[RMDB]
Structure probing data (2A3 and DMS) for a 177-nucleotide construct. The RNA was probed in 150 mM KOAc, 10 mM MgCl2 and 150 mM bicine (pH 8.5) at 24 C. 2A3 adducts were read by reverse transcription with SuperScript II with manganese.
RNA sequence: GGGAACGACUCGAGUAGAGUCGAAAAGGACGACCAACAGUUCGUCGCGUUGAACAAGAACCUUGCGGAGUUCACCGACAGGUUGACCCACUCCGAUGCGGACCUGUCGAACGCCAUCCAGCAAUUCGGCUCAUCUCCCAUUCGUGGGAGAUGAGCCAAAAGAAACAACAACAACAAC
Reactivity to 2A3 in 0.01 (KOAc 150mM, MgCl2 10mM, bicine 150mM(pH8.5), 24C), signal-to-noise 1, nucleotides 027 to 126: g010g000a010c040g020a020c010c010a190a180c160a130g000u150u060c000g000u010c020g000c000g020u000u040g040a060a000c050a120a120g090a030a010c000c000u000u050g000c000g000g010a010g090u120u040c050a000c010c020g010a000c000a000g000g030u000u040g100a060c000c040c000a000c070u160c060c110g020a080u040g000c110g010g010a060c000c000u010g000u000c010g040a030a020c040g030c000c000a010u000c000c000a030g000c030a150a020u120u170c100
Reactivity to DMS in 0.01 (KOAc 150mM, MgCl2 10mM, bicine 150mM(pH8.5), 24C), signal-to-noise 1, nucleotides 027 to 126: g000g000a010c000g000a010c000c000a000a260c300a180g040u190u000c000g030u000c030g010c040g030u000u000g000a220a140c040a100a090g000a050a030c050c000u060u120g000c000g000g000a090g090u000u050c000a040c240c070g000a090c000a000g000g000u000u050g030a020c090c010c000a050c010u020c080c040g050a060u040g000c010g090g150a040c000c000u000g000u000c030g050a180a040c270g030c190c070a050u000c070c050a070g000c090a050a090u040u080c150